[RMDB]
RNA sequence: GGGAACGACUCGAGUAGAGUCGAAAAGCGAAAAUCGGACGGUGGCUGCAAGUCGCAUCGCAAAACCGCGGCAAGUGGAGUUAGCGAGAGGAGGCUGGGUUUUGGCUUCCUUAAGCAAUCGGUCACAAUAAGAGGAUUCGCUUCGGCGAAUCCUCAACAAUACUGAGAUCUUCGGAUCUCAGUAUUGAAAAGAAACAACAACAACAAC
Reactivity to DMS in 0.01 (KOAc 150mM, MgCl2 10mM, bicine 150mM(pH8.5), 24C), signal-to-noise 2, nucleotides 027 to 156: g000c000g000a080a010a050a110u000c040g030g000a050c070g000g020u000g020g000c050u000g010c090a040a130g020u000c020g000c030a190u010c000g000c020a040a050a060a160c050c120g000c030g010g010c030a090a210g040u000g000g000a080g000u000u020a190g030c000g000a300g020a040g010g000a060g010g040c000u000g070g040g000u000u000u000u010g030g030c000u000u000c020c010u000u000a030a300g010c030a060a100u000c050g040g020u000c040a060c040a050a120u010a060a150g020a060g020g010a060u010u000c020g030c010u000u000c300g070g030c020g020a020a000u000c010c010u000c000a000a020
Reactivity to 2A3 in 0.01 (KOAc 150mM, MgCl2 10mM, bicine 150mM(pH8.5), 24C), signal-to-noise 4, nucleotides 027 to 156: g030c030g040a000a020a030a110u140c050g020g050a020c040g090g020u030g030g000c020u050g000c070a070a060g030u070c030g010c030a060u050c020g030c070a050a060a020a020c060c040g010c020g050g020c100a090a050g020u050g050g060a100g020u070u110a020g030c000g010a030g010a010g040g010a010g010g000c030u090g120g100g090u090u080u170u300g030g000c000u010u020c000c000u010u020a050a000g000c010a010a040u060c010g040g020u040c020a020c020a060a070u180a170a030g000a000g000g000a010u000u010c000g000c000u010u020c070g070g000c000g000a000a000u020c000c000u000c000a000a000
Annotation
An RNA of 207 nucleotides, treated with DMS and 2A3 and read out base by base. The DMS profile rests on 2,590 reads. Conditions: 150 mM KOAc, 10 mM MgCl2 and 150 mM bicine (pH 8.5), 24 C. For 2A3 the reverse transcriptase was SuperScript II with manganese.